[RMDB]
Chemical mapping of a 177-nucleotide RNA with DMS and 2A3.
The reactions ran in a buffer of 150 mM KOAc, 10 mM MgCl2 and 150 mM bicine (pH 8.5), at 24 C.
For DMS the reverse transcriptase was MarathonRT.
For DMS, 18,302 sequencing reads were counted.
For 2A3 the reverse transcriptase was SuperScript II with manganese.
Reactivities are given for positions 27 through 126.

RNA sequence: GGGAACGACUCGAGUAGAGUCGAAAAGGAUCGGACGCCAAUGCCUCAACGCGGGCUUGGGUUUCGGCGGCGGCUGCUUGCCCAAGGACAUCCGCGCUUUCAUGGCCCGCGCCGGCGAACUGGGAGCCACAGCUCCUAGUUUCGACUAGGAGCUGUGAAAAGAAACAACAACAACAAC
Reactivity to DMS in 0.01 (KOAc 150mM, MgCl2 10mM, bicine 150mM(pH8.5), 24C), signal-to-noise 5, nucleotides 027 to 126: g020g000a070u010c040g000g000a120c050g000c030c040a090a070u040g010c040c020u000c150a100a190c050g010c010g000g000g000c010u000u010g010g000g010u010u020u010c070g010g000c010g010g010c100g000g000c030u000g000c040u000u010g000c020c010c020a110a040g000g000a130c090a070u010c000c000g010c040g010c060u000u010u020c060a070u020g000g010c000c010c030g000c040g020c050c070g020g010c020g000a080a060c080u020g000g000g000a090g010c150
Reactivity to 2A3 in 0.01 (KOAc 150mM, MgCl2 10mM, bicine 150mM(pH8.5), 24C), signal-to-noise 7, nucleotides 027 to 126: g090g020a080u080c040g010g030a020c030g020c030c010a080a100u150g040c010c020u060c070a060a050c030g000c020g010g000g010c000u010u030g090g000g000u050u090u110c060g020g000c010g060g020c030g060g010c020u030g000c030u040u090g030c000c000c010a010a020g040g010a040c010a070u030c010c010g000c000g000c030u070u090u100c090a110u140g040g000c000c000c010g010c010g000c020c020g010g020c010g000a040a030c030u040g020g000g050a030g030c020